[RMDB]
RNA sequence: GGGAACGACUCGAGUAGAGUCGAAAAUAUGUGGCGACAAUGGACUGUCAGAAACCAAGGAGCUCUCCUGUCCAGAGAAGCCCCUGUUUGAAAGGAAUUCCAGACACACCUUUAUCCUGAGGUAUUCCAAAAUAUUUCACUGCUAGAUUUGGGAAAAUAGGCAUUAAAUAUUCGUAUUUAAUGCCUAAAAAGAAACAACAACAACAAC
Reactivity to DMS in 0.01 (KOAc 150mM, MgCl2 10mM, bicine 150mM(pH8.5), 24C), signal-to-noise 2, nucleotides 027 to 156: u000a040u000g060u010g000g030c020g000a180c040a070a190u000g010g020a070c080u010g000u010c060a150g020a080a060a070c040c050a150a110g030g010a080g020c090u010c020u000c020c030u010g020u000c120c140a110g000a230g000a090a300g000c040c000c000c020u000g000u000u000u010g000a070a100a070g010g020a100a180u000u000c000c020a110g010a090c030a100c050a050c040c020u000u000u010a070u020c050c040u000g010a090g020g000u000a050u000u010c070c120a070a070a070a080u000a030u010u000u000c040a080c070u020g040c030u000a120g010a160u000u010u000g000g010g000a090a040a060a230
Reactivity to 2A3 in 0.01 (KOAc 150mM, MgCl2 10mM, bicine 150mM(pH8.5), 24C), signal-to-noise 2, nucleotides 027 to 156: u300a040u060g050u050g010g010c030g010a010c080a110a000u020g010g000a010c040u010g020u130c050a050g130a120a040a050c040c020a050a090g070g010a080g040c020u000c010u000c020c010u040g070u030c020c010a010g000a000g000a090a000g010c010c000c000c000u040g080u070u120u170g130a100a060a030g020g020a010a010u080u010c050c020a060g040a050c030a000c000a040c130c020u080u100u130a090u060c000c040u040g010a030g010g000u040a060u070u030c010c000a000a070a090a070u110a050u040u090u070c060a040c080u080g070c020u040a040g030a200u080u090u070g070g000g040a060a050a020a080